Structure probing data (DMS and 2A3) for a 177-nucleotide construct. The reactions ran in a buffer of 150 mM KOAc, 10 mM MgCl2 and 150 mM bicine (pH 8.5), at 24 C. For 2A3 the reverse transcriptase was SuperScript II with manganese. Source: RMDB library TTRDES, as collected in RNAgym. The DMS profile rests on 1,779 reads. The 2A3 profile rests on 2,809 reads. For DMS the reverse transcriptase was MarathonRT.
[RMDB]
RNA sequence: GGGAACGACUCGAGUAGAGUCGAAAAAAAGAUAUGGAGCUGUUUGAGCUCAACAGGAGCGAUGAAAUUAACUCGGAAACGAGUUAAUGGAGCUCCGUUGAGCAAUGAUGACAGCUCCUAAGUCAAAGAACAGUAGAUGGUUCGCCAUCUACUGUUCAAAAGAAACAACAACAACAAC
Reactivity to DMS in 0.01 (KOAc 150mM, MgCl2 10mM, bicine 150mM(pH8.5), 24C), signal-to-noise 2, nucleotides 027 to 126: a110a070a080g010a090u000a300u000g010g010a010g010c010u010g000u000u000u000g010a140g010c010u000c010a020a010c000a110g040g020a000g040c000g000a110u010g000a060a110a030u000u010a000a010c030u000c000g020g000a170a060a160c010g000a010g040u000u000a000a000u000g000g000a070g040c010u000c000c020g010u000u000g020a020g000c020a110a050u020g000a110u010g000a010c010a000g000c000u000c000c000u000a020a060g010u000c030a160a100a200
Reactivity to 2A3 in 0.01 (KOAc 150mM, MgCl2 10mM, bicine 150mM(pH8.5), 24C), signal-to-noise 1, nucleotides 027 to 126: a030a000a010g070a030u090a030u170g000g010a020g010c020u020g050u070u050u040g030a030g020c000u000c020a000a000c030a170g040g010a010g000c090g220a300u010g000a040a010a010u010u000a010a000c000u010c020g030g000a030a050a030c000g020a000g020u000u010a010a000u010g000g000a000g000c000u020c000c010g000u000u000g000a000g020c030a090a080u160g000a010u120g000a000c010a000g020c000u010c000c000u000a010a000g000u030c020a010a000a140